This 177-nucleotide RNA was probed chemically with DMS. For DMS the reverse transcriptase was MarathonRT.

RNA sequence: GGGAACGACUCGAGUAGAGUCGAAAAUCAGCGAACAGAAGAGUCUCUCACGCGGUAGGAGCAAGCCCAUAGCGAUAGGGGGAGAUGCUGGGAGUUAGAGGAGACCUUAGGGGAGACCGAAGCGAGGCCUAUUAAGACGCUUCGGCGUCUUAAUAGGAAAAGAAACAACAACAACAAC
Reactivity to DMS in 0.01 (KOAc 150mM, MgCl2 10mM, bicine 150mM(pH8.5), 24C), signal-to-noise 1, nucleotides 027 to 126: u010c080a110g010c060g010a080a120c090a110g010a100a070g010a070g010u000c020u000c010u010c060a140c090g010c100g010g040u000a110g020g000a120g000c090a050a070g020c000c010c070a110u000a110g000c050g010a070u010a070g000g000g030g000g000a050g010a050u000g010c040u000g000g000g000a080g010u010u020a060g010a100g010g000a090g000a090c030c070u000u010a080g000g000g000g000a040g000a070c010c050g000a060a050g020c100g010a090g010g000
The RNA was probed in 150 mM KOAc, 10 mM MgCl2 and 150 mM bicine (pH 8.5) at 24 C.